The data come from the RNA Mapping Database (RMDB), library OK1LIB. An RNA of 177 nucleotides, treated with 2A3 and DMS and read out base by base. The RNA was probed in 150 mM KOAc, 10 mM MgCl2 and 150 mM bicine (pH 8.5) at 24 C. Reactivities are given for positions 27 through 126. High DMS reactivity at an A or C suggests that its Watson-Crick edge is free.

RNA sequence: GGGAACGACUCGAGUAGAGUCGAAAACAUUUUUUAUGUAGGGCUCGAUCAGUGGGCGUAAGCUCAGGUCGAUUGCUCUAAUGGUUUGGUUUGUGACCUGGUUGCUCGCUGAGAGUUGAACCAUUAGCUAAAUAAUUAAAUUCGUUUAAUUAUUUAGAAAAGAAACAACAACAACAAC
Reactivity to 2A3 in 0.01 (KOAc 150mM, MgCl2 10mM, bicine 150mM(pH8.5), 24C), signal-to-noise 3, nucleotides 027 to 126: c000a050u100u160u100u100u180u200a110u170g070u020a030g010g010g000c020u000c010g000a050u020c030a100g140u050g000g010g010c000g020u030a060a000g000c010u000c030a000g020g000u010c010g010a020u020u180g000c000u000c010u000a010a000u020g020g020u020u040u100g070g010u080u060u070g030u050g040a040c000c000u000g000g000u000u020g000c000u020c000g020c130u090g080a030g000a000g050u000u100g060a000a010c000c000a020u040u040a010g000
Reactivity to DMS in 0.01 (KOAc 150mM, MgCl2 10mM, bicine 150mM(pH8.5), 24C), signal-to-noise 3, nucleotides 027 to 126: c020a020u010u020u050u050u040u020a020u030g010u010a040g000g000g010c010u010c000g010a040u000c000a130g000u020g010g000g010c000g000u050a070a120g020c030u010c020a040g000g000u010c000g000a060u040u030g020c030u000c010u000a020a020u020g000g000u000u010u010g010g000u000u000u010g020u030g000a090c040c050u010g010g000u010u010g000c000u000c010g010c200u050g010a110g000a050g000u000u010g010a030a040c000c000a050u010u020a060g020